RNA sequence: GGGAACGACUCGAGUAGAGUCGAAAAAAUAGGGGAAAAUAAUGCGAUCUUUGCAUUUUAGGCAAAUUUGCAUAUGUGAUUUGUGGAGCAGAAUUUGCUUACCAUCUGUUUUUGCUUGUAUUGAUGAUGGCAGGACACACGUGUGCAUACAUUUGAACCAUAGCGUCCCUUUCGAGGGACGCUAUGGAAAAGAAACAACAACAACAAC
Reactivity to 2A3 in 0.01 (KOAc 150mM, MgCl2 10mM, bicine 150mM(pH8.5), 24C), signal-to-noise 1, nucleotides 027 to 156: a000a020u170a040g060g000g020g000a000a040a000a210u260a010a010u060g000c060g060a070u200c130u110u130u110g000c000a020u020u010u080u100a140g010g000c000a030a030a030u050u050u000g030c020a000u030a010u020g000u030g030a100u000u050u170g040u090g000g000a000g040c000a000g050a300a200u240u120u060g000c010u050u060a100c000c000a030u060c050u010g080u010u070u090u110u070g010c010u040u080g050u300a180u200u260g130a070u070g010a030u080g060g000c000a000g050g020a050c010a000c000a000c070g030u000g010u000g010c020a020u030a080c030a030u000u050u100g070a000a000